[RMDB]
RNA sequence: GGGAACGACUCGAGUAGAGUCGAAAACAGUCCAAAGCUUCACUGAGCCAUUUUACCUCACCCCCACUGAUGUUCGCCGACCGUUGACUAUUCUCUACAAACCACAAAGACAUUCGAACACUAUACCCAUAUCCCUCGUCUUCGGACGAGGGAUAUGAAAAGAAACAACAACAACAAC
Reactivity to 2A3 in 0.01 (KOAc 150mM, MgCl2 10mM, bicine 150mM(pH8.5), 24C), signal-to-noise 6, nucleotides 027 to 126: c030a010g060u040c020c010a080a050a020g000c030u080u050c030a040c080u070g020a010g030c030c010a100u060u070u040u120a060c020c000u020c020a040c000c000c010c000c000a020c040u060g020a050u070g050u050u040c020g010c030c000g020a050c020c010g040u020u050g020a020c020u060a100u140u040c010u000c000u040a050c030a030a080a030c010c010a020c030a060a140a010g080a020c010a050u050u070c030g040a030a010c010a000c020u050a050u070a110c020c000
Reactivity to DMS in 0.01 (KOAc 150mM, MgCl2 10mM, bicine 150mM(pH8.5), 24C), signal-to-noise 2, nucleotides 027 to 126: c130a070g000u030c060c020a040a100a160g010c040u020u000c020a080c070u010g000a010g010c020c040a030u000u050u020u010a070c090c010u000c040a190c040c020c000c000c030a090c060u000g000a040u010g000u000u000c050g000c000c000g020a110c070c010g000u000u000g010a120c080u000a080u010u010c020u010c010u000a020c070a050a080a050c030c020a050c050a010a090a040g030a040c090a030u010u040c000g000a040a030c090a030c040u020a050u010a040c070c060